[RMDB]
RNA sequence: GGGAACGACUCGAGUAGAGUCGAAAAUUCAUAGGGAAGAGAAUGGUUUUUGGUGUGUUCAUUUCAGCAUAUCUUGAAUGCCUACUCCAUGACAGACCUGUACUAGACUAUAAAGUUGAAAAAGGCAUCAACCUAGUUCGUUCGCGAACUAGGUUGAAAAAGAAACAACAACAACAAC
Reactivity to DMS in 0.01 (KOAc 150mM, MgCl2 10mM, bicine 150mM(pH8.5), 24C), signal-to-noise 1, nucleotides 027 to 126: u000u000c020a080u020a060g000g000g000a090a160g000a050g040a100a030u000g050g020u000u080u000u000u000g000g030u000g040u000g020u000u000c080a150u020u020u000c060a050g000c040a050u000a080u000c080u000u000g020a020a060u010g000c000c020u000a050c090u010c030c080a030u010g000a090c200a030g000a130c030c000u010g000u010a040c120u010a180g010a020c030u000a080u020a100a060a060g000u000u000g010a060a050a080a080a080g020g000c110a150

Description:
An RNA of 177 nucleotides, treated with DMS and read out base by base. The RNA was probed in 150 mM KOAc, 10 mM MgCl2 and 150 mM bicine (pH 8.5) at 24 C.